[RMDB]
RNA sequence: GGGAACGACUCGAGUAGAGUCGAAAAGCAUCGACGACGGUCCUGCCAUGAGACCGUAACGAGGACAUGUCGCCUCGAAUGGCGUCGGGGAGCCGACAGCUUACCCCAAGGAUGAGCGCCUAAUGCCUAUACCCGAUUCGCUUCGGCGAAUCGGGAACCAUGCCAAUUGGUUCGCCAAUUGGCAUGGAAAAGAAACAACAACAACAAC
Reactivity to 2A3 in 0.01 (KOAc 150mM, MgCl2 10mM, bicine 150mM(pH8.5), 24C), signal-to-noise 2, nucleotides 027 to 156: g040c000a030u060c060g040a030c010g020a020c000g020g000u010c000c010u050g210c070c000a150u190g010a100g000a100c020c010g020u000a000a060c040g020a030g030g020a020c020a100u260g060u120c100g000c030c010u020c000g020a110a130u120g000g010c000g000u040c030g000g000g000g000a010g020c000c060g060a040c080a010g000c010u030u150a220c020c000c030c030a060a030g110g030a150u160g040a020g060c010g040c000c000u030a060a080u060g000c010c010u080a080u110a180c010c010c010g000a000u010u000c000g010c010u040u030c190g070g000c010g000a000a000u000c010g000g000g000a000a000
Chemical mapping of a 207-nucleotide RNA with 2A3. The 2A3 profile rests on 1,113 reads.